[RMDB]
The record gives the reactivity of an RNA of 177 nucleotides to DMS and 2A3. The 2A3 profile rests on 3,681 reads.
RNA sequence: GGGAACGACUCGAGUAGAGUCGAAAAGGAGCCCUCGUGGGAUCGCUCAUCAUGGCGAGUAUCGUCAACGGUAUGAGCGUGAUGAACAUGCCGAUCUUCUGGCAGUACGUGACGCGGGGUCUCGUGCCUCAUCGUCCGUUUUCGAACGGACGAUGAGAAAAGAAACAACAACAACAAC
Reactivity to DMS in 0.01 (KOAc 150mM, MgCl2 10mM, bicine 150mM(pH8.5), 24C), signal-to-noise 3, nucleotides 027 to 126: g040g000a050g000c070c000c010u000c020g030u010g000g000g010a080u000c030g030c160u000c010a010u000c040a060u000g030g020c000g000a300g010u000a040u000c000g030u000c190a080a140c100g030g010u000a010u000g000a230g010c000g000u000g000a090u000g010a030a040c100a140u000g010c000c010g030a170u010c260u000u000c120u000g030g010c010a000g020u020a080c110g010u000g010a140c010g000c020g000g010g020g000u000c000u000c020g000u000g010c060
Reactivity to 2A3 in 0.01 (KOAc 150mM, MgCl2 10mM, bicine 150mM(pH8.5), 24C), signal-to-noise 3, nucleotides 027 to 126: g070g000a000g010c000c010c010u000c000g010u010g040g240g060a050u030c010g020c030u000c010a010u000c010a000u030g300g000c000g010a080g070u090a080u110c010g110u040c080a210a240c090g040g020u110a010u020g010a000g000c010g000u000g010a020u040g010a010a020c050a050u020g000c020c010g080a140u060c100u300u060c110u170g000g000c010a020g020u090a020c060g010u040g060a030c000g000c000g020g000g000g030u000c010u020c030g030u050g070c010